[RMDB]
RNA sequence: GGGAACGACUCGAGUAGAGUCGAAAAGCUCGUAGGUUCAGAUGAUGGGCCCGCAUCUGUACGAAAGUCAGACGAAAGUCCAGCCUACGUGCAUGAGCACGCGGGCCCCGUGCUCUACUGCAAAAGAAAUAUCCAUAUCCUUCGGGAUAUGGAUAUUAAAAGAAACAACAACAACAAC
Reactivity to DMS in 0.01 (KOAc 150mM, MgCl2 10mM, bicine 150mM(pH8.5), 24C), signal-to-noise 5, nucleotides 027 to 126: g010c000u000c010g010u000a010g010g010u000u010c110a080g000a020u010g010a060u050g010g020g000c000c000c000g010c020a010u010c000u000g000u040a020c030g000a110a090a150g000u010c120a080g010a010c000g010a100a090a130g010u010c010c200a060g000c000c000u000a010c000g000u000g000c000a080u000g010a040g000c010a010c020g000c100g010g000g000c020c000c000c000g000u000g000c010u000c000u010a140c090u000g010c150a090a040a090a080g010a090
Reactivity to 2A3 in 0.01 (KOAc 150mM, MgCl2 10mM, bicine 150mM(pH8.5), 24C), signal-to-noise 8, nucleotides 027 to 126: g000c010u000c010g000u000a000g010g020u070u130c100a030g010a080u060g010a020u060g020g000g000c000c000c000g010c000a010u000c000u030g100u160a050c050g100a140a060a030g050u060c030a020g010a020c010g060a130a030a010g000u000c020c010a010g000c000c000u000a010c000g000u010g000c000a070u100g010a000g000c010a000c020g000c020g000g000g020c000c000c000c010g000u000g000c000u000c000u020a080c030u050g140c080a070a030a030a030g150a030